Background: This 207-nucleotide RNA was probed chemically with 2A3. Reactivities are rounded to 0.1 and cut off at 0 and 3. The RNA was probed in 150 mM KOAc, 10 mM MgCl2 and 150 mM bicine (pH 8.5) at 24 C.
[RMDB]
RNA sequence: GGGAACGACUCGAGUAGAGUCGAAAAAGCAACACUAUCCGUGUUUUCUUGCCGAACAAGCAAAGAACAGUGGUAUGUGAACAUUCUACUUAGGAAAUUUAGCUAUUUAUCUGCCUGUGGAGCACAUUAAGGAUCAUGUUCAACUUAAAGACAGGCACUCUGACCAGAGGUUCGCCUCUGGUCAGAGAAAAGAAACAACAACAACAAC
Reactivity to 2A3 in 0.01 (KOAc 150mM, MgCl2 10mM, bicine 150mM(pH8.5), 24C), signal-to-noise 2, nucleotides 027 to 156: a000g030c030a000a080c050a050c020u090a090u050c000c100g000u040g000u000u130u030u000c120u010u000g000c030c050g140a090a030c040a140a000g030c010a000a060a120g000a030a060c060a040g040u190g100g100u070a080u220g040u010g000a020a020c050a110u110u210c020u030a100c080u070u040a080g000g190a040a140a000u200u190u110a000g000c020u060a060u140u220u080a040u140c090u020g000c000c000u020g000u010g060g160a030g000c030a030c000a090u070u070a040a020g030g020a120u170c030a020u090g130u100u120c070a120a060c020u080u120a020a000a000g110a120c000a000g000g000c000a010